[RMDB]
RNA sequence: GGGAACGACUCGAGUAGAGUCGAAAACUUUUAGGAAAUACACAGUCGAUUGCCUCCGACAGGCGAUGGACCGCCACUUUAUGAUUGCACUGGCGGAUGCCGUAAGCUCUGUUUCCCUUCUCGACAGGAUGCACGCUCGAUUCGUCGAGCGUGCAUCAAAAGAAACAACAACAACAAC
Reactivity to 2A3 in 0.01 (KOAc 150mM, MgCl2 10mM, bicine 150mM(pH8.5), 24C), signal-to-noise 2, nucleotides 027 to 126: c030u000u040u040u240a230g000g040a110a120a070u150a050c000a000c050a040g040u000c040g080a020u000u210g050c000c000u050c000c050g050a020c050a110g000g000c060g070a040u040g120g020a020c000c060g010c010c000a060c010u050u060u070a180u300g110a220u030u260g000c140a090c090u020g000g000c000g000g010a010u100g020c000c000g020u030a060a000g010c000u000c020u140g040u000u030u000c000c000c000u060u000c060u020c020g000a020c000a010g170
Structure probing data (2A3) for a 177-nucleotide construct. It was measured as part of the RMDB library OK1LIB. Reactivities are rounded to 0.1 and cut off at 0 and 3. Reactivities are given for positions 27 through 126. 2A3 adducts were read by reverse transcription with SuperScript II with manganese.